[RMDB]
RNA sequence: GGGAACGACUCGAGUAGAGUCGAAAAUCUUCCACCCUUGAAGGUGGAAAUGGUCCUGACGGCAGAGCCACUGAUAACUCUCCAAUCCCGGAGAUUUCCAUCAGGCACACCGGAAGACGAGGAUGAACGGUGAGUAUCGGUUCGCCGAUACUCACCGAAAAGAAACAACAACAACAAC
Reactivity to DMS in 0.01 (KOAc 150mM, MgCl2 10mM, bicine 150mM(pH8.5), 24C), signal-to-noise 2, nucleotides 027 to 126: u040c130u000u010c000c000a000c000c000c050u070u000g000a110a120g010g020u020g010g000a000a000a080u000g040g020u000c010c000u000g000a260c070g030g030c050a080g000a070g020c060c060a150c240u010g000a050u000a050a140c220u010c000u010c030c000a070a140u030c170c070c120g000g000a020g020a000u000u000u010c160c110a060u000c010a050g000g030c040a230c080a080c030c010g070g010a150a030g010a090c130g000a050g000g010a080u000g020a100a130
Reactivity to 2A3 in 0.01 (KOAc 150mM, MgCl2 10mM, bicine 150mM(pH8.5), 24C), signal-to-noise 1, nucleotides 027 to 126: u010c010u010u020c000c010a030c000c030c020u100u280g170a280a020g000g040u070g000g040a050a010a030u100g130g000u000c040c020u010g040a050c060g000g030c120a100g000a010g070c000c000a110c020u010g000a000u010a080a010c000u010c000u020c020c020a070a170u100c060c010c010g070g000a010g000a000u020u000u060c050c020a000u010c010a000g020g000c000a000c000a020c060c010g050g030a030a010g050a070c070g050a070g060g010a070u090g090a120a040